[RMDB]
RNA sequence: GGGAACGACUCGAGUAGAGUCGAAAAGAUAUGGAGACAUGACAUGUAUAUCGCUCGGAAACGAGCGUAAGUACAACAGCAUGCUCCUAAGUCAAAAGGGUCAAGGUCCUUCGGGACCUUGACCCAACAUAUUCGUAUUCUUCGGAAUACGAAUAUGAAAAGAAACAACAACAACAAC
Reactivity to 2A3 in 0.01 (KOAc 150mM, MgCl2 10mM, bicine 150mM(pH8.5), 24C), signal-to-noise 2, nucleotides 027 to 126: g010a010u060a030u200g010g020a010g020a090c010a000u010g020a030c030a150u130g060u020a010u010a010u130c000g000c000u000c000g000g000a090a080a030c010g010a000g000c010g010u000a020a030g010u010a010c040a150a010c030a080g060c000a000u000g000c000u000c000c000u020a140a020g040u030c020a010a000a080a140g000g000g000u020c030a040a000g000g000u010c020c040u150u200c300g060g030g000a010c020c000u010u000g020a000c040c000c000a000a000
Reactivity to DMS in 0.01 (KOAc 150mM, MgCl2 10mM, bicine 150mM(pH8.5), 24C), signal-to-noise 4, nucleotides 027 to 126: g000a050u000a300u000g010g000a020g020a120c010a000u000g000a040c130a180u000g010u000a000u000a300u000c010g000c000u010c000g000g000a090a100a180c010g020a000g020c000g030u000a000a110g000u000a000c000a040a070c180a100g000c020a010u000g010c000u000c000c000u000a050a140g000u000c040a070a060a090a100g000g000g000u000c000a010a000g000g000u000c000c000u000u010c150g030g020g000a010c000c000u000u000g020a000c000c000c000a000a020
Conditions: 150 mM KOAc, 10 mM MgCl2 and 150 mM bicine (pH 8.5), 24 C. This 177-nucleotide RNA was probed chemically with 2A3 and DMS. The 2A3 profile rests on 3,519 reads. 2A3 adducts were read by reverse transcription with SuperScript II with manganese.